An RNA of 177 nucleotides, treated with DMS and 2A3 and read out base by base. The data come from the RNA Mapping Database (RMDB), library OK2TRN.

[RMDB]
RNA sequence: GGGAACGACUCGAGUAGAGUCGAAAACGGCAACCUGGCGAACUGGGCGGUGCCCGGCAAACCGCUGCUGGGCGUGGGCGGCGCGAUGGACCUGGCGAGUGGAGCGGGUCGCCUGAUCGUGACCAUGUGCUGUAUGAAGGUUCGCCUUCAUACAGCAAAAAGAAACAACAACAACAAC
Reactivity to DMS in 0.01 (KOAc 150mM, MgCl2 10mM, bicine 150mM(pH8.5), 24C), signal-to-noise 3, nucleotides 027 to 126: c080g010g000c070a090a080c050c040u020g000g000c030g010a060a120c060u000g000g000g020c050g010g000u000g000c020c010c010g000g010c020a010a100a120c130c120g000c100u010g020c010u000g010g010g010c020g000u010g000g020g000c060g000g000c040g010c040g000a060u010g000g010a080c060c020u000g000g010c050g010a110g020u000g000g000a170g000c030g000g010g020u000c040g020c020c040u010g000a070u010c110g010u000g000a160c020c010a110u010g030
Reactivity to 2A3 in 0.01 (KOAc 150mM, MgCl2 10mM, bicine 150mM(pH8.5), 24C), signal-to-noise 1, nucleotides 027 to 126: c040g040g030c000a000a020c030c010u030g070g000c010g020a040a060c050u030g040g060g000c020g090g070u100g020c000c000c030g040g000c020a080a090a050c040c040g040c120u030g000c010u010g020g000g030c020g000u070g000g000g000c020g010g010c040g000c020g110a040u080g000g000a010c000c030u020g040g010c010g040a040g020u140g010g050a050g030c050g020g030g000u000c000g010c020c000u010g030a100u060c030g040u080g020a060c010c010a060u130g030
Source information
Reactivities are given for positions 27 through 126. The RNA was probed in 150 mM KOAc, 10 mM MgCl2 and 150 mM bicine (pH 8.5) at 24 C. The DMS profile rests on 3,760 reads.